[RMDB]
RNA sequence: GGGAACGACUCGAGUAGAGUCGAAAAGGAGAUUCGUCUCCAAAACGGAUAUGGAGCUCUCGAGUACUAUCCCAACUAUAACGUCGGAAACGACGUUACGAAUUGGGUAAGGUACAUUUGAGAGAGCUCCUAAGUCGAAAUUGAUCUUCGGAUCAAAGUACUGUUGCAAUUUCGAUUGCAACAGUACAAAAGAAACAACAACAACAAC
Reactivity to DMS in 0.01 (KOAc 150mM, MgCl2 10mM, bicine 150mM(pH8.5), 24C), signal-to-noise 1, nucleotides 027 to 156: g000g000a030g010a030u000u020c250g020u000c000u030c000c000a020a030a070a140c050g000g050a140u000a180u010g030g000a030g020c000u000c000u000c010g010a200g000u010a010c000u000a300u000c010c010c000a010a010c030u010a090u000a020a000c000g020u000c010g000g000a160a230a300c000g010a010c010g000u000u010a000c000g030a060a030u000u000g010g030g010u010a040a170g010g000u000a000c030a240u010u000u000g010a300g000a030g000a040g020c000u000c010c000u000a000a030g030u000c050g010a060a140a190u000u010g000a010u000c010u010u000c180g030g000a070u000c050a070a060a190
Reactivity to 2A3 in 0.01 (KOAc 150mM, MgCl2 10mM, bicine 150mM(pH8.5), 24C), signal-to-noise 5, nucleotides 027 to 156: g010g010a020g010a040u110u140c210g060u000c070u010c000c000a080a030a010a040c050g010g010a030u070a070u170g000g000a000g000c000u010c000u000c000g040a050g010u010a000c010u030a070u260c000c000c000a000a000c000u020a010u010a030a000c000g010u000c010g020g050a080a030a070c020g010a000c000g010u010u000a000c010g070a180a300u020u000g010g020g020u080a220a240g050g010u010a040c010a140u130u170u170g110a130g000a000g000a000g000c000u000c000c000u000a000a000g000u000c000g020a030a130a220u050u060g000a010u000c010u050u090c300g120g010a000u000c000a000a000a030